[RMDB]
RNA sequence: GGGAACGACUCGAGUAGAGUCGAAAAUUCUCCUUGGGACCUAAGUGGUUUUCACUUAGAAAACAAAAAGGGUCAGACAGGACACAAACAUAGUUAAAAUGCUCCAUAGGAGGUUUAUCCAAGCCCCCAUACCUGGUGGAUUCGUCCACCAGGUAUGAAAAGAAACAACAACAACAAC
Reactivity to DMS in 0.01 (KOAc 150mM, MgCl2 10mM, bicine 150mM(pH8.5), 24C), signal-to-noise 1, nucleotides 027 to 126: u010u030c020u000c000c030u010u010g000g040g010a080c070c000u010a020a070g000u000g040g030u000u000u060u010c000a070c160u010u000a050g000a080a020a050a050c020a030a090a070a150a240g010g010g000u000c030a040g000a110c250a080g000g000a040c090a080c040a050a120a090c080a130u010a090g030u000u010a070a120a180a170u000g030c060u000c000c010a070u000a020g030g000a020g000g010u000u000u000a100u030c020c050a130a140g010c050c010c040c130
Reactivity to 2A3 in 0.01 (KOAc 150mM, MgCl2 10mM, bicine 150mM(pH8.5), 24C), signal-to-noise 1, nucleotides 027 to 126: u060u030c000u000c000c000u050u020g010g040g000a040c010c010u030a030a030g010u030g120g030u280u060u090u220c030a010c010u080u060a110g000a010a050a000a000c050a000a290a090a090a010g040g000g100u040c010a010g030a240c030a000g000g170a000c000a000c020a070a160a000c110a130u240a100g000u020u110a160a300a270a180u070g000c040u010c010c000a040u070a090g010g010a010g090g000u090u130u010a060u000c010c000a000a160g140c040c010c000c000
This 177-nucleotide RNA was probed chemically with DMS and 2A3. Source: RMDB library OK2TRN, as collected in RNAgym. Values cover nucleotides 27 to 126. The RNA was probed in 150 mM KOAc, 10 mM MgCl2 and 150 mM bicine (pH 8.5) at 24 C. For 2A3, 594 sequencing reads were counted.